This 177-nucleotide RNA was probed chemically with 2A3. The reactions ran in a buffer of 150 mM KOAc, 10 mM MgCl2 and 150 mM bicine (pH 8.5), at 24 C. For 2A3 the reverse transcriptase was SuperScript II with manganese. Reactivities are rounded to 0.1 and cut off at 0 and 3. It was measured as part of the RMDB library OK1LIB. For 2A3, 705 sequencing reads were counted.
[RMDB]
RNA sequence: GGGAACGACUCGAGUAGAGUCGAAAAGCAACCAGUCUCCGCUUGGAACUCGGAAGGAAACGUGAACCUCACGCGAUCGGUGGAAUCAAUCUCGCUACGGACCCGAGGGCGCCACUGAGCACCGACACUCCGGUUGCCUAUUCGUAGGCAACCGGAGAAAAGAAACAACAACAACAAC
Reactivity to 2A3 in 0.01 (KOAc 150mM, MgCl2 10mM, bicine 150mM(pH8.5), 24C), signal-to-noise 2, nucleotides 027 to 126: g100c050a090a000c000c000a000g050u000c000u000c020c000g090c110u090u220g050g030a030a010c050u000c100g000g050a000a050g090g110a160a020a010c030g000u100g000a010a010c000c030u020c020a010c050g000c080g040a130u080c020g040g140u100g030g100a070a000u090c040a030a000u030c120u010c070g030c020u070a000c050g050g020a050c000c000c030g090a100g020g010g000c020g060c000c060a140c030u020g000a000g000c000a000c010c000g060a000c090a020